Description:
Chemical mapping of a 207-nucleotide RNA with 2A3. Conditions: 150 mM KOAc, 10 mM MgCl2 and 150 mM bicine (pH 8.5), 24 C.
RNA sequence: GGGAACGACUCGAGUAGAGUCGAAAAUUGUGAAAUAAUUUAGACAUAUAGAAAAGUACAGAAGCAAAUAUAACAGACACACUUGUGUAAUUACAGAUACAGUAUAUACAGGUGUAUACACACACACACACACACACCCACAUACACACAGUAUAUACAGAGAGAGAUACUUCGGUAUCUCUCUCUGAAAAGAAACAACAACAACAAC
Reactivity to 2A3 in 0.01 (KOAc 150mM, MgCl2 10mM, bicine 150mM(pH8.5), 24C), signal-to-noise 2, nucleotides 027 to 156: u120u020g030u030g020a090a010a070u070a060a050u130u110u200a050g020a020c040a000u290a020u070a120g080a020a060a050a000g030u050a090c020a060g050a070a000g030c050a010a100a010u130a030u030a070a090c020a000g130a040c010a000c000a000c100u020u000g000u000g020u060a160a120u210u090a040c020a010g040a050u080a110c020a050g050u000a020u000a000u010a020c000a000g080g000u000g000u020a000u040a030c020a020c020a000c010a000c000a000c000a000c000a010c000a000c000a000c000a020c000c080c030a040c000a020u090a030c080a000c010a000c050a060g150u160a020u230a130u260a090

It was measured as part of the RMDB library OK3TST.